[RMDB]
Chemical mapping of a 177-nucleotide RNA with 2A3 and DMS. DMS adducts were read by reverse transcription with MarathonRT. The data come from the RNA Mapping Database (RMDB), library OK1LIB. The RNA was probed in 150 mM KOAc, 10 mM MgCl2 and 150 mM bicine (pH 8.5) at 24 C. High DMS reactivity at an A or C suggests that its Watson-Crick edge is free. The 2A3 profile rests on 6,145 reads. For DMS, 8,303 sequencing reads were counted. For 2A3 the reverse transcriptase was SuperScript II with manganese.

RNA sequence: GGGAACGACUCGAGUAGAGUCGAAAAUACCCCGACCCACGAAAUCACCAUCGCACAUUCGAUCCUGAGAGCGCGGCGGCGCAUCGAAAAAGCUGACCCUGACUGGGCGACGAGCAGGGCUGGGAUCAUUUAAUCACCGGUUCGCCGGUGAUUAAAUAAAAGAAACAACAACAACAAC
Reactivity to 2A3 in 0.01 (KOAc 150mM, MgCl2 10mM, bicine 150mM(pH8.5), 24C), signal-to-noise 5, nucleotides 027 to 126: u120a030c010c000c000c000g030a050c010c010c000a040c040g060a030a040a050u070c030a040c040c010a050u030c030g030c030a050c010a110u100u070c040g060a060u040c010c030u110g040a060g000a010g110c020g000c010g020g040c030g080g000c020g010c030a110u060c030g080a100a000a040a000a020g040c050u060g060a160c020c000c010u090g070a220c030u040g050g040g030c010g030a050c030g020a010g030c020a020g020g000g000c010u030g030g020g020a030u040c030
Reactivity to DMS in 0.01 (KOAc 150mM, MgCl2 10mM, bicine 150mM(pH8.5), 24C), signal-to-noise 4, nucleotides 027 to 126: u040a160c030c010c020c040g010a110c030c010c030a080c080g010a070a100a060u000c080a050c040c040a060u010c020g000c030a070c080a120u010u010c050g020a030u000c020c030u010g000a120g000a120g020c050g010c030g030g010c090g010g020c010g000c010a060u010c050g010a070a060a070a090a070g000c030u000g010a120c000c000c000u000g000a130c050u000g000g020g010c070g000a100c060g020a080g000c020a020g010g000g020c030u000g010g010g000a070u010c100